[RMDB]
Source: RMDB library M2PK50, as collected in RNAgym. Chemical mapping of a 177-nucleotide RNA with 2A3 and DMS. For 2A3, 2,246 sequencing reads were counted. The RNA was probed in 150 mM KOAc, 10 mM MgCl2 and 150 mM bicine (pH 8.5) at 24 C.

RNA sequence: GGGAACGACUCGAGUAGAGUCGAAAACACACGUGCUUCGGCACGUGUGAAACCUAGUCAAAAUAACGCUAGACUAGGAAAGCGUAAGUACGAAAGUACAAAAAAGGUGAGUGUUCGCACUCACCAACUGCAAUGAAGAGUUCGCUCUUCAUUGCAGAAAAGAAACAACAACAACAAC
Reactivity to 2A3 in 0.01 (KOAc 150mM, MgCl2 10mM, bicine 150mM(pH8.5), 24C), signal-to-noise 2, nucleotides 027 to 126: c000a000c000a000c000g000u010g000c000u000u030c110g130g000c010a000c000g010u000g000u000g030a030a000a000c000c000u020a010g050u050c010a000a030a150a260u180a170a030c020g030c100u080a020g000a010c010u010a030g000g110a030a010a000g050c040g120u140a110a190g010u000a020c000g030a140a050a020g000u020a020c020a010a090a070a060a000a010g000g010u000g000a000g010u030g010u070u170c230g020c100a010c000u000c000a000c000c000a000a000
Reactivity to DMS in 0.01 (KOAc 150mM, MgCl2 10mM, bicine 150mM(pH8.5), 24C), signal-to-noise 1, nucleotides 027 to 126: c030a030c030a000c010g000u010g020c010u000u010c150g010g060c000a020c000g000u000g000u000g000a060a070a120c000c000u000a020g000u000c010a070a050a130a090u000a170a030c160g030c070u000a150g000a050c020u010a050g010g000a070a050a070g000c060g000u000a160a030g000u000a010c020g000a120a040a120g000u000a000c030a020a050a100a050a050a070g000g000u000g000a010g000u000g000u030u000c240g010c010a060c020u000c000a000c000c000a010a000